Source: RMDB library OK1LIB, as collected in RNAgym. Structure probing data (DMS and 2A3) for a 177-nucleotide construct. The 2A3 profile rests on 753 reads. Conditions: 150 mM KOAc, 10 mM MgCl2 and 150 mM bicine (pH 8.5), 24 C. 2A3 adducts were read by reverse transcription with SuperScript II with manganese. Values cover nucleotides 27 to 126.
RNA sequence: GGGAACGACUCGAGUAGAGUCGAAAACACGAAAGUUGGCUAAUCCUGGUCGGACAUCAGGCGGUUAGUGCAUUGGCAUAAGCCAGCUUGGCGCUAAUAGAUACUAAUCGUAGCAUAGCUGAAUAAAAGCAUGCUAUCCAUUCGUGGAUAGCAUGCUAAAAGAAACAACAACAACAAC
Reactivity to DMS in 0.01 (KOAc 150mM, MgCl2 10mM, bicine 150mM(pH8.5), 24C), signal-to-noise 1, nucleotides 027 to 126: c110a140c110g040a080a110a000g000u000u020g000g090c030u000a110a120u010c000c000u000g000g060u000c190g000g060a220c150a010u000c060a030g100g010c000g040g000u000u000a010g000u010g000c000a020u010u000g000g010c000a170u030a140a150g000c010c030a120g000c130u000u010g010g000c030g030c000u000a000a000u030a060g020a060u000a000c040u000a000a040u000c000g000u000a040g000c120a080u030a050g010c000u020g010a080a000u000a090a100a160
Reactivity to 2A3 in 0.01 (KOAc 150mM, MgCl2 10mM, bicine 150mM(pH8.5), 24C), signal-to-noise 1, nucleotides 027 to 126: c070a000c090g190a080a050a100g040u030u030g010g000c000u020a100a000u120c000c020u000g020g000u050c070g080g040a040c010a050u010c000a030g000g000c000g000g010u000u000a000g000u000g000c000a000u020u030g000g090c020a060u090a300a000g040c000c000a040g060c160u030u140g030g000c020g000c000u000a000a000u000a210g050a040u000a000c010u000a000a000u000c010g010u040a010g000c000a080u030a040g010c000u030g040a170a080u030a140a110a040